[RMDB]
RNA sequence: GGGAACGACUCGAGUAGAGUCGAAAAAACAUUGAUUUAAACGGUAUCCUGGACUUUGAGGAUUAUGUUGGUAUAUCUUCACGGCGCGUAAAUGACAUCCUUAUUUCUGAAAUAAUGGCACCUGCUUAUCAUACUUUCUAUUCUAUGUAUAAUCAUCGAUAUAACUCACAUUCGUGUGAGUUAUAUCAAAAGAAACAACAACAACAAC
Reactivity to DMS in 0.01 (KOAc 150mM, MgCl2 10mM, bicine 150mM(pH8.5), 24C), signal-to-noise 3, nucleotides 027 to 156: a080a060c040a100u010u000g000a130u010u000u000a060a080a150c020g020g010u000a040u000c010c010u010g030g020a080c050u000u020u000g020a110g010g000a060u000u010a070u000g010u010u010g000g010u000a130u010a090u010c030u000u000c030a100c030g030g000c020g020c040g020u000a030a080a090u000g020a070c040a070u000c010c010u010u000a110u000u000u000c090u000g010a080a050a120u000a050a080u000g030g010c070a040c040c010u000g010c040u000u000a050u000c020a080u000a040c040u000u000u000c040u000a110u000u000c030u000a080u000g010u010a060u010a050a090u010c060a140u000c050
Reactivity to 2A3 in 0.01 (KOAc 150mM, MgCl2 10mM, bicine 150mM(pH8.5), 24C), signal-to-noise 4, nucleotides 027 to 156: a000a000c120a070u140u160g010a080u070u120u200a100a100a020c040g020g000u040a050u060c010c010u030g000g040a050c030u130u060u110g040a050g010g000a020u040u060a090u170g030u010u070g010g020u070a090u020a030u130c020u060u050c030a020c080g050g000c040g000c020g030u040a000a170a080u100g020a020c010a030u050c000c000u000u050a070u070u180u020c040u060g100a080a050a050u160a050a040u090g020g000c000a030c020c000u000g010c010u030u020a030u080c030a000u020a090c010u040u110u060c020u040a120u110u040c040u030a080u050g070u010a070u090a150a070u120c050a040u170c080

Notes
The data come from the RNA Mapping Database (RMDB), library OK3TST. This 207-nucleotide RNA was probed chemically with DMS and 2A3. The DMS profile rests on 6,184 reads. The RNA was probed in 150 mM KOAc, 10 mM MgCl2 and 150 mM bicine (pH 8.5) at 24 C. Reactivities are rounded to 0.1 and cut off at 0 and 3. High 2A3 reactivity points to a flexible backbone, as in loops and unpaired stretches.